The record gives the reactivity of an RNA of 207 nucleotides to 2A3. It was measured as part of the RMDB library OK3TST.

[RMDB]
RNA sequence: GGGAACGACUCGAGUAGAGUCGAAAAGAUGGGCCUUCUGGUAAUGUACCUGGCCGCCCAGGAGGUCCUGAGGAAGAGAUAGACGGCCAGGGUCCGAUCAUACGCUAUAAACCUGCUCAACGUAUGAUCGGUUAUGACAAUUAAGAAGAGCAGGUUACAUACUAUACGCCUUCGGGCGUAUAGUAUGAAAAGAAACAACAACAACAAC
Reactivity to 2A3 in 0.01 (KOAc 150mM, MgCl2 10mM, bicine 150mM(pH8.5), 24C), signal-to-noise 5, nucleotides 027 to 156: g100a040u100g010g010g000c000c000u000u000c010u010g010g040u090a140a080u140g050u120a180c000c010u000g000g010c000c000g000c000c000c010a000g000g000a000g000g000u020c020c020u040g030a040g010g120a070a080g070a020g020a090u100a080g050a070c010g000g000c000c000a000g000g000g000u010c000c000g000a000u000c000a000u000a000c010g000c040u060a000u100a210a150a060c000c000u000g000c010u010c000a020a020c010g000u000a000u000g000a000u000c000g010g000u010u010a010u010g000a010c040a020a090u200u160a160a080g060a060a010g010a030g000c000a000g000g000u000u000a010